[RMDB]
Notes
The record gives the reactivity of an RNA of 207 nucleotides to DMS and 2A3. It was measured as part of the RMDB library OK3TST. For DMS the reverse transcriptase was MarathonRT.

RNA sequence: GGGAACGACUCGAGUAGAGUCGAAAACUCGAGGAGCAUAGAGGCGUGCGACCUCGACAUGAAUCAGCCUCCAUUAGAAGGUACUCGUGAGAGCGAAGUACCGAGAAUUGGUCGACGAUCACCGGCGAUCUUUCGACCUUGAAUUAAGCCGGAAAAAGAUUUAUUUAUCCUUCGGGAUAAAUAAAUCAAAAGAAACAACAACAACAAC
Reactivity to DMS in 0.01 (KOAc 150mM, MgCl2 10mM, bicine 150mM(pH8.5), 24C), signal-to-noise 2, nucleotides 027 to 156: c040u000c010g010a010g000g000a300g000c030a080u010a100g000a100g000g020c060g010u000g010c010g000a110c000c000u000c000g010a080c100a070u010g020a080a070u000c050a140g000c010c000u000c010c100a280u010u000a110g000a190a120g020g030u000a020c000u000c000g030u000g010a300g000a300g000c020g010a070a080g040u000a000c020c020g030a080g020a100a200u000u000g000g000u000c010g000a040c300g000a140u000c020a040c010c030g020g000c040g000a040u010c020u000u000u000c000g010a060c010c050u000u010g030a050a140u010u000a080a130g040c000c000g010g010a040a050a040a200a070
Reactivity to 2A3 in 0.01 (KOAc 150mM, MgCl2 10mM, bicine 150mM(pH8.5), 24C), signal-to-noise 4, nucleotides 027 to 156: c010u000c010g000a000g020g000a010g010c020a000u030a050g010a010g020g000c030g020u020g010c010g100a300c010c000u000c010g010a010c020a150u300g080a130a140u140c020a060g000c010c000u010c040c000a120u140u170a080g060a160a050g020g000u000a000c000u000c000g010u020g060a060g000a010g060c020g010a110a020g000u000a000c000c000g000a010g020a020a140u170u100g000g000u000c010g000a000c010g000a010u000c000a000c110c010g000g000c000g010a000u000c000u020u120u030c000g000a000c000c000u010u100g010a010a010u100u140a030a040g000c000c010g000g000a070a000a010a000a000